[RMDB]
RNA sequence: GGGAACGACUCGAGUAGAGUCGAAAACUCCAGCUGAAUCGAAGCGAGUAUCGAUUCAGAGAUCUGACUUGAUGCUUACGCUUACCACAACUCAAUGUUGUGAUAGCUGGGACAUUGAGUAAUGUACGAUGUACUGUUAUUUCGAUAAUAGUACAUCAAAAGAAACAACAACAACAAC
Reactivity to DMS in 0.01 (KOAc 150mM, MgCl2 10mM, bicine 150mM(pH8.5), 24C), signal-to-noise 9, nucleotides 027 to 126: c080u010c000c020a090g010c010u000g000a060a040u020c060g000a030a050g010c130g020a130g020u030a050u000c000g010a010u000u000c000a000g000a160g010a100u040c040u020g000a030c040u000u000g000a010u000g010c010u000u000a050c140g000c010u000u000a110c050c020a000c010a010a000c000u000c250a120a070u050g010u000u000g000u000g000a040u000a000g010c000u000g000g000g000a090c020a020u000u010g000a040g010u000a080a070u030g010u010a070c110
Reactivity to 2A3 in 0.01 (KOAc 150mM, MgCl2 10mM, bicine 150mM(pH8.5), 24C), signal-to-noise 9, nucleotides 027 to 126: c010u000c000c000a010g000c000u010g030a020a040u040c030g010a020a000g090c030g040a020g040u050a030u010c000g000a000u000u000c000a000g020a010g020a070u040c020u050g040a010c000u000u000g000a000u000g000c000u030u020a040c070g000c000u000u020a050c010c000a000c000a010a010c000u050c040a090a090u210g000u000u000g000u010g010a010u030a010g000c000u000g000g000g020a030c000a010u010u030g030a010g020u060a050a090u090g020u040a010c040
Structure probing data (DMS and 2A3) for a 177-nucleotide construct. The DMS profile rests on 53,899 reads. Values are in units of 0.01, from 0 to 300, in steps of 10. The 2A3 profile rests on 93,013 reads.